[RMDB]
RNA sequence: GGGAACGACUCGAGUAGAGUCGAAAAUAUGAGGCUGAUACCGAACAGACACAGAAUGUUACUGUUAAACCUAAGAGGUUACGCAAAAAGCGUAAUGUUGACCCUUUGUCCAAUUUUGAACAUAAGGCUAUUGUAAACGGUUCGCCGUUUACAAUAGAAAAGAAACAACAACAACAAC
Reactivity to 2A3 in 0.01 (KOAc 150mM, MgCl2 10mM, bicine 150mM(pH8.5), 24C), signal-to-noise 3, nucleotides 027 to 126: u220a080u080g040a010g030g020c020u020g030a030u050a080c020c010g010a030a020c010a010g070a020c010a000c030a100g210a140a060u120g050u140u070a080c010u000g020u040u050a060a080a010c010c010u040a100a020g070a030g160g020u030u010a000c020g000c000a060a160a120a070a010g000c000g000u010a000a020u080g050u040u090g030a050c020c000c000u020u010u020g050u000c040c020a060a060u110u090u070u270g060a050a020c010a030u110a070a020g030g000
Reactivity to DMS in 0.01 (KOAc 150mM, MgCl2 10mM, bicine 150mM(pH8.5), 24C), signal-to-noise 4, nucleotides 027 to 126: u020a110u000g010a110g000g020c040u000g000a130u000a050c030c050g010a100a060c070a020g010a120c120a060c070a120g010a080a240u000g010u020u000a080c020u000g000u000u000a050a060a070c070c030u010a090a090g010a110g010g010u010u000a020c000g000c010a090a070a080a120a130g010c010g000u000a010a030u010g000u000u000g000a090c160c020c010u010u000u000g000u010c020c020a040a170u000u010u010u000g010a020a010c050a040u020a040a050g010g000